The record gives the reactivity of an RNA of 177 nucleotides to 2A3. The RNA was probed in 150 mM KOAc, 10 mM MgCl2 and 150 mM bicine (pH 8.5) at 24 C. For 2A3, 822 sequencing reads were counted. For 2A3 the reverse transcriptase was SuperScript II with manganese.
RNA sequence: GGGAACGACUCGAGUAGAGUCGAAAACGGUGCUCAUGAAGUCAUUAUGAAGAUCCACAGACAUGUCUAACUGAUAAUACUCAGUUUGUAUUGGGACUCUAUCUGUGUGCUUCCUGCAGUCAUAUCCGCGCUGGCAAUAGUUCGCUAUUGCCAGCGCAAAAGAAACAACAACAACAAC
Reactivity to 2A3 in 0.01 (KOAc 150mM, MgCl2 10mM, bicine 150mM(pH8.5), 24C), signal-to-noise 1, nucleotides 027 to 126: c010g010g010u060g010c020u040c020a010u070g020a010a040g060u000c000a020u020u300a050u120g030a010a050g010a030u000c010c010a080c010a080g020a030c020a000u170g100u000c050u100a010a000c000u000g030a010u050a300a090u120a240c050u010c010a000g010u000u000u000g000u000a020u040u150g020g020g000a000c040u040c000u050a240u050c020u000g020u010g020u030g040c010u000u000c000c010u030g000c100a030g030u140c000a060u070a020u020c040c050